[RMDB]
RNA sequence: GGGAACGACUCGAGUAGAGUCGAAAAGUUGACUUGUUCGCAAGUCAACAAAGAAACUGGAAGGCGCGGCGAGGUGCAGCCGCAGUGAAUCAAAUGCAGCAAAAACCCGACGGUUCGCCGUCGGGAACCUCUAAAUACUCUUCGGAGUAUUUAGAGGAAAAGAAACAACAACAACAAC
Reactivity to DMS in 0.01 (KOAc 150mM, MgCl2 10mM, bicine 150mM(pH8.5), 24C), signal-to-noise 2, nucleotides 027 to 126: g020u000u000g010a010c000u000u000g010u000u030c140g050c010a010a000g010u000c000a010a000c000a080a070a130g000a070a130a080c080u000g010g010a100a120g000g000c100g010c070g010g000c030g000a070g030g020u010g000c040a090g010c030c050g000c010a050g020u010g000a080a100u010c130a020a050a040u010g010c030a040g010c030a090a050a070a100a120c010c000c010g000a020c000g000g030u000u000c220g000c000c010g020u000c010g000g000g000a010a000
Reactivity to 2A3 in 0.01 (KOAc 150mM, MgCl2 10mM, bicine 150mM(pH8.5), 24C), signal-to-noise 3, nucleotides 027 to 126: g000u000u010g000a020c000u000u000g010u040u120c130g010c080a000a000g000u010c000a000a000c000a010a020a000g020a020a160a030c080u100g040g090a140a020g110g020c050g020c040g030g000c010g050a070g020g100u040g020c000a000g010c010c000g000c010a010g040u080g100a020a060u100c040a040a020a070u070g010c010a030g040c010a070a020a010a090a160c010c010c000g000a000c000g000g050u050u070c230g030c140c000g000u000c000g000g010g000a000a000